[RMDB]
RNA sequence: GGGAACGACUCGAGUAGAGUCGAAAAGUACUAGCGUUCGCGCUAGUACAAAGAAAGAAAGAUAGUCUGAGCGCACAGACUAGCGCAAAUGAAAGAAAGAAAAAAUCCCACUCUUCGGAGUGGGAAACAUGCAAGAUGGGUUCGCCCAUCUUGCAUGAAAAGAAACAACAACAACAAC
Reactivity to DMS in 0.01 (KOAc 150mM, MgCl2 10mM, bicine 150mM(pH8.5), 24C), signal-to-noise 1, nucleotides 027 to 126: g010u010a000c020u000a000g000c000g030u030u020c220g010c010g030c000u010a000g010u000a010c000a030a020a070g000a130a080a100g010a070a060a090g000a070u000a080g000u000c000u000g010a220g060c240g010c130a090c010a050g000a010c010u000a010g030c020g000c210a030a060a140u010g000a080a100a040g000a070a020a140g020a010a030a060a120a050a140u000c000c000c000a040c000u000c000u000u000c240g020g000a040g050u000g010g020g000a000a000a030